An RNA of 177 nucleotides, treated with 2A3 and DMS and read out base by base. Source: RMDB library OK2TRN, as collected in RNAgym.

RNA sequence: GGGAACGACUCGAGUAGAGUCGAAAACGGAGAGUUCAUCAUGAAGUUCAAGCCCAACGUCUGGCAACCCUCGCAGACAAGAUCUACGCACACCUGGCUUCCAAGGGGGCCCAGAAGAUAGGUGCGAGAAUCCAUGGUUAUUCGUAACCAUGGAUUCAAAAGAAACAACAACAACAAC
Reactivity to 2A3 in 0.01 (KOAc 150mM, MgCl2 10mM, bicine 150mM(pH8.5), 24C), signal-to-noise 3, nucleotides 027 to 126: c030g040g030a070g010a010g110u090u080c040a130u050c030a070u220g060a070a040g030u050u060c050a080a060g020c000c010c030a030a060c070g030u020c030u010g060g000c030a070a170c010c030c000u040c070g000c010a000g020a060c010a020a040g080a050u050c050u140a050c020g000c030a000c000a000c020c020u000g020g010c010u080u000c040c030a160a200g070g000g000g030g000c030c030c000a020g000a050a010g070a050u150a080g120g000u020g000c020g010a050
Reactivity to DMS in 0.01 (KOAc 150mM, MgCl2 10mM, bicine 150mM(pH8.5), 24C), signal-to-noise 4, nucleotides 027 to 126: c100g030g020a120g000a080g010u000u000c070a090u000c090a130u020g000a120a100g010u010u000c090a100a160g020c030c010c030a070a140c140g010u000c010u010g010g000c080a080a130c050c010c020u000c040g020c050a050g010a070c080a070a080g000a140u000c060u000a100c080g010c050a030c040a070c050c010u000g000g000c040u000u000c000c060a090a100g040g010g000g000g030c100c020c040a070g000a070a020g010a130u010a050g010g030u000g010c060g010a160

As a SHAPE reagent, 2A3 marks flexible, mostly unpaired nucleotides at the ribose 2'-OH. The 2A3 profile rests on 4,788 reads. DMS adducts were read by reverse transcription with MarathonRT. The reactions ran in a buffer of 150 mM KOAc, 10 mM MgCl2 and 150 mM bicine (pH 8.5), at 24 C. Values cover nucleotides 27 to 126.